RNA sequence: GGGAACGACUCGAGUAGAGUCGAAAAACACCCAUCCGUGAACCCCAGGUCCCGGGCCGCCGGCUCGCCGCGCACCAGGGGCCGGCGGACAGAAGAGCGGCCGAGCGGCUCGAGGCUGGGGGACCGCGGUCCUAAUGGCAUUCGUGCCAUUAGGACCAAAAGAAACAACAACAACAAC
Reactivity to 2A3 in 0.01 (KOAc 150mM, MgCl2 10mM, bicine 150mM(pH8.5), 24C), signal-to-noise 2, nucleotides 027 to 126: a010c060a100c000c000c000a030u070c070c010g020u030g060a070a040c010c000c010c000a010g000g180u120c000c000c000g000g010g000c000c000g000c000c010g000g020c030u060c030g010c020c010g070c030g010c030a050c050c090a110g300g080g020g010c030c000g000g000c010g030g020a010c050a030g200a110a010g020a020g050c080g020g000c010c000g010a050g030c000g000g000c000u000c000g010a040g000g000c000u000g000g010g000g010g000a000c030c030g020c040